This 207-nucleotide RNA was probed chemically with DMS and 2A3.
For DMS the reverse transcriptase was MarathonRT.
Conditions: 150 mM KOAc, 10 mM MgCl2 and 150 mM bicine (pH 8.5), 24 C.
The DMS profile rests on 1,979 reads.

RNA sequence: GGGAACGACUCGAGUAGAGUCGAAAAGAGAGCCAGAUCAUAGAGGUUAUCACAAACUCUCUGGAAUUCGCACGUCUACACUUGGGUCCUUUUUUGCGACAGUGGUGCAAAGAUAUGGGCGUCUCGAACACAAAGACUUACCAUGAUCUGCAGUCUCAUGUAGUUGCAUGUUCGCAUGCAACUACAUAAAAGAAACAACAACAACAAC
Reactivity to DMS in 0.01 (KOAc 150mM, MgCl2 10mM, bicine 150mM(pH8.5), 24C), signal-to-noise 2, nucleotides 027 to 156: g030a040g040a060g040c030c030a070g010a070u000c080a150u010a120g000a080g030g000u000u000a100u010c070a050c130a120a080a100c020u000c040u000c050u010g000g000a080a170u000u000c020g030c210a150c000g040u000c010u000a040c050a050c040u000u040g000g000g040u010c000c020u010u000u000u030u020u000g110c060g010a090c060a110g000u010g010g060u010g000c000a050a060a170g010a170u000a050u000g000g020g010c220g030u000c080u010c060g030a070a120c070a100c180a130a090a100g000a070c050u030u000a100c000c000a030u000g050a050u000c070u000g040c050a160g000u000c010u000c050
Reactivity to 2A3 in 0.01 (KOAc 150mM, MgCl2 10mM, bicine 150mM(pH8.5), 24C), signal-to-noise 4, nucleotides 027 to 156: g060a000g000a010g080c040c020a020g010a030u070c050a040u120a100g090a070g060g050u110u120a130u250c130a040c120a110a140a030c020u050c010u010c010u060g010g070a040a070u080u040c020g000c050a010c020g100u020c040u070a060c040a010c100u080u060g140g000g020u030c010c000u030u070u080u060u220u150g040c070g030a050c020a060g070u070g020g040u060g000c040a110a100a010g040a030u060a060u100g020g010g020c020g040u000c030u020c030g080a130a020c080a010c010a090a120a000g020a020c000u020u060a090c010c030a020u030g020a020u000c000u000g000c030a030g180u040c020u000c020